Annotation:
Chemical mapping of a 177-nucleotide RNA with DMS and 2A3. Conditions: 150 mM KOAc, 10 mM MgCl2 and 150 mM bicine (pH 8.5), 24 C. For DMS the reverse transcriptase was MarathonRT. For DMS, 1,100 sequencing reads were counted.

RNA sequence: GGGAACGACUCGAGUAGAGUCGAAAAUCGAGUUUGUUCGCAAACUCGAAAAUAGAAUUCCGGUCGAGUCCGGAGAAACAAAGUCAAAAAUAAAUAAGAAUAAAACAUCUGAGUUCGCUCAGAUGAAGUUUACAUUAAGGUUCGCCUUAAUGUAAACAAAAGAAACAACAACAACAAC
Reactivity to DMS in 0.01 (KOAc 150mM, MgCl2 10mM, bicine 150mM(pH8.5), 24C), signal-to-noise 2, nucleotides 027 to 126: u010c000g010a010g010u000u000u000g020u000u000c160g090c010a020a040a030c000u010c000g000a010a080a090a140u000a090g010a130a200u020u000c030c000g000g020u010c120g010a180g020u000c020c000g000g000a020g000a110a110a090c070a010a070a070g000u010c010a000a120a020a040a120u010a070a100a110u020a050a140g000a120a070u010a070a080a060a150c000a010u000c000u000g010a050g020u000u020c120g050c000u020c000a000g000a000u000g010a010a030
Reactivity to 2A3 in 0.01 (KOAc 150mM, MgCl2 10mM, bicine 150mM(pH8.5), 24C), signal-to-noise 2, nucleotides 027 to 126: u010c000g000a000g010u010u000u010g030u030u040c090g000c140a000a000a000c000u000c000g000a000a020a000a000u050a020g100a060a110u120u000c000c000g000g040u040c080g080a040g190u160c000c000g030g000a040g050a000a020a010c080a060a050a050g030u080c020a020a070a130a150a080u300a140a140a080u300a230a050g080a170a060u170a300a200a040a030c000a000u000c010u000g010a020g010u050u040c150g060c070u000c020a010g000a010u010g000a010a000